[RMDB]
RNA sequence: GGGAACGACUCGAGUAGAGUCGAAAAGAAGAGAAAGGAGACACAGGGACAGUCUCCAGAGGUUCCUAAGGCCUCGAUCGCGCCUGCCGGGAAUCAUGGACCCCCGGUUGUCCAUGAAAGAAGAAGAACUAGGCUGAUGAUUCGUCAUCAGCCUAGUAAAAGAAACAACAACAACAAC
Reactivity to 2A3 in 0.01 (KOAc 150mM, MgCl2 10mM, bicine 150mM(pH8.5), 24C), signal-to-noise 2, nucleotides 027 to 126: g050a010a010g090a000g030a090a100a110g000g040a080g010a000c030a000c090a080g080g000g150a000c040a070g000u000c000u010c010c000a010g000a030g000g000u070u070c040c020u050a010a070g040g000c000c060u040c030g000a050u110c080g020c020g020c040c000u000g000c000c060g010g050g000a040a040u070c030a030u120g050g010a010c010c020c000c030c000g070g000u100u090g010u000c010c020a000u080g080a030a060a010g210a040a000g050a070a000g030a060
Reactivity to DMS in 0.01 (KOAc 150mM, MgCl2 10mM, bicine 150mM(pH8.5), 24C), signal-to-noise 3, nucleotides 027 to 126: g020a150a110g000a100g030a100a100a130g000g030a020g010a040c000a080c130a140g000g000g010a120c140a190g010u010c000u000c000c030a070g000a050g000g010u010u010c060c060u030a090a100g010g020c050c030u010c100g010a080u020c100g000c120g010c000c020u000g030c110c030g000g060g000a110a080u000c000a040u000g000g000a010c010c040c000c020c010g010g010u030u020g000u000c000c060a010u000g000a010a110a140g000a100a080g000a120a090g000a090